[RMDB]
RNA sequence: GGGAACGACUCGAGUAGAGUCGAAAAUCGGGAGCAUUGGGUUUGGAGGAUUGUGAUUGAGUGGAGGGUUUUGCCGAUGCUAUCGGGGGUUUGAAAGCAUUCCAAACUCGGGCGAACCCUCGAUGUAGUAUAUUAAAUUUUUCGAAAUUUAAUAUACAAAAGAAACAACAACAACAAC
Reactivity to DMS in 0.01 (KOAc 150mM, MgCl2 10mM, bicine 150mM(pH8.5), 24C), signal-to-noise 3, nucleotides 027 to 126: u040c040g000g020g000a060g000c080a050u010u020g020g000g000u020u000u000g000g010a100g010g000a100u020u010g010u020g010a120u020u030g010a120g020u000g000g020a060g000g010g010u000u010u000u010g030c020c010g010a100u020g010c100u020a040u020c050g010g000g010g000g000u000u000u010g000a100a060a120g010c080a080u010u000c050c040a060a040a050c060u010c060g000g000g010c030g010a010a010c000c000c000u000c000g000a010u010g000u020a160
Reactivity to 2A3 in 0.01 (KOAc 150mM, MgCl2 10mM, bicine 150mM(pH8.5), 24C), signal-to-noise 1, nucleotides 027 to 126: u080c010g020g010g000a030g060c020a040u020u090g010g000g000u040u090u060g000g000a030g050g000a070u100u120g040u050g070a130u100u120g010a010g030u060g000g080a050g020g010g000u000u020u060u090g000c000c000g000a050u060g040c060u060a040u040c010g010g000g000g000g040u000u000u030g020a020a030a000g040c000a050u110u000c010c000a040a040a010c010u020c010g000g020g000c000g010a000a000c000c000c000u000c000g000a000u000g000u010a020
Chemical mapping of a 177-nucleotide RNA with DMS and 2A3. High 2A3 reactivity points to a flexible backbone, as in loops and unpaired stretches. For 2A3, 882 sequencing reads were counted. For DMS the reverse transcriptase was MarathonRT. 2A3 adducts were read by reverse transcription with SuperScript II with manganese. The RNA was probed in 150 mM KOAc, 10 mM MgCl2 and 150 mM bicine (pH 8.5) at 24 C. Reactivities are rounded to 0.1 and cut off at 0 and 3.